[RMDB]
RNA sequence: GGGAACGACUCGAGUAGAGUCGAAAACAAUGGUGCGAGCCUAUAGUCCCAGCUACUUGGGAGGCUGAGGCAAAGGAUUGCUUGAAUAAGGCUAUAGUGAACCAUGACUGUGCCACUGCACUUCAGCCUGGGUGGCAGAGUGAGACACUGUCUCUCAUGAUUAAUUAAAUUUCGAUUUAAUUAAUCAAAAAGAAACAACAACAACAAC
Reactivity to DMS in 0.01 (KOAc 150mM, MgCl2 10mM, bicine 150mM(pH8.5), 24C), signal-to-noise 4, nucleotides 027 to 156: c060a080a080u000g010g010u000g000c020g020a120g010c030c020u000a070u000a100g030u000c010c000c010a090g020c080u000a060c070u000u000g010g010g020a150g010g000c020u000g010a030g030g060c030a050a160a180g010g010a090u000u000g000c030u000u020g010a100a100u000a070a070g020g010c010u000a120u000a050g020u000g040a080a060c030c030a090u000g010a090c050u000g010u000g000c010c020a060c030u000g010c040a130c040u000u000c050a090g010c010c040u010g020g020g050u010g000g000c010a030g000a080g030u010g000a100g010a060c040a090c100u000g010u000c020u000c000u000c020a300
Reactivity to 2A3 in 0.01 (KOAc 150mM, MgCl2 10mM, bicine 150mM(pH8.5), 24C), signal-to-noise 5, nucleotides 027 to 156: c030a030a120u070g020g020u080g020c050g050a050g040c000c000u060a050u050a070g070u050c010c010c000a000g000c030u170a110c050u150u120g070g030g000a020g030g000c010u010g010a030g010g030c040a060a030a050g100g040a180u140u080g030c020u040u080g040a090a070u190a150a030g010g000c010u030a020u050a080g080u080g050a020a020c020c000a040u090g040a050c030u050g010u030g080c010c010a030c030u090g040c100a060c010u090u080c040a030g020c010c020u040g030g000g000u010g020g000c010a000g000a000g040u070g030a030g010a010c100a020c190u090g020u010c020u000c000u000c020a030